The data come from the RNA Mapping Database (RMDB), library RNAMAK. Chemical mapping of a 207-nucleotide RNA with 2A3 and DMS.
[RMDB]
RNA sequence: GGGAACGACUCGAGUAGAGUCGAAAACGCUGGGCCUGCAUUACUUCGUAUAGCAAGAAGAACAGAAUACUGAAGCGCGCACGGUAUUCUGUUCUUUGAUGACCUAUAUAGAAGUAAUGGGCCUGUGCUGAAGCGCGCACGGCAACCGAAAGGUGCGGAUAACAUUAGGGUUCGCCCUAAUGUUAUCAAAAGAAACAACAACAACAAC
Reactivity to 2A3 in 0.01 (KOAc 150mM, MgCl2 10mM, bicine 150mM(pH8.5), 24C), signal-to-noise 5, nucleotides 027 to 156: c040g010c030u070g000g000g010c010c020u200g070c090a020u000u010a000c000u000u000c000g000u010a000u000a010g020c080a270a300g010a010a000g000a020a000c000a010g010a010a000u000a000c000u030g050a220a050g020c010g000c000g000c020a010c020g000g000u000a000u000u000c000u000g000u000u000c000u000u000u000g010a010u020g040a010c000c010u000a000u000a000u000a080g010a000a000g000u000a000a000u000g000g000g000c000c000u000g010u010g000c020u080g020a120a030g000c010g000c010g000c020a010c020g070g000c030a070a100c020c000g050a050a040a060g000g010u030g010c020g050
Reactivity to DMS in 0.01 (KOAc 150mM, MgCl2 10mM, bicine 150mM(pH8.5), 24C), signal-to-noise 3, nucleotides 027 to 156: c060g030c040u000g010g010g020c010c000u010g110c090a060u010u010a000c010u000u000c000g000u000a020u000a010g000c020a050a070g010a010a020g010a030a010c010a010g000a050a010u000a010c000u000g010a040a100g020c030g030c030g040c010a300c020g020g020u000a010u000u000c000u000g010u000u000c000u000u000u000g010a060u010g000a050c300c000u000a010u000a020u000a090g050a030a020g020u000a010a010u000g010g000g020c000c010u000g030u000g010c010u000g030a110a070g020c010g020c010g020c010a110c030g020g000c020a110a300c000c020g000a100a120a150g020g030u010g010c000g000

DMS adducts were read by reverse transcription with MarathonRT. Values cover nucleotides 27 to 156.